[RMDB]
RNA sequence: GGGAACGACUCGAGUAGAGUCGAAAACGCCAUCUUGCAUGUCUUUGUUACCGCCUUUACCAAUGCCAGCGAUUUUGCCAUCUUUAAUACCAAUAUCCGCUUUAUAAAUACCGGUGUAAUCCACGAUUCCGGCUUUACAGUUCGCUGUAAAGCCGGAAAAAGAAACAACAACAACAAC
Reactivity to 2A3 in 0.01 (KOAc 150mM, MgCl2 10mM, bicine 150mM(pH8.5), 24C), signal-to-noise 1, nucleotides 027 to 126: c050g000c000c000a050u030c010u030u010g000c070a070u020g020u070c080u050u070u140g070u120u110a030c000c000g000c010c000u020u000u010a110c080c000a080a030u080g010c000c010a050g130c150g070a260u040u010u100u180g000c000c010a040u000c030u040u000u090a050a000u090a100c000c030a100a020u080a020u120c020c050g000c040u140u110u000a190u050a140a060a020u020a060c000c010g000g000u070g020u030a000a060u000c040c020a040c000g050a010u010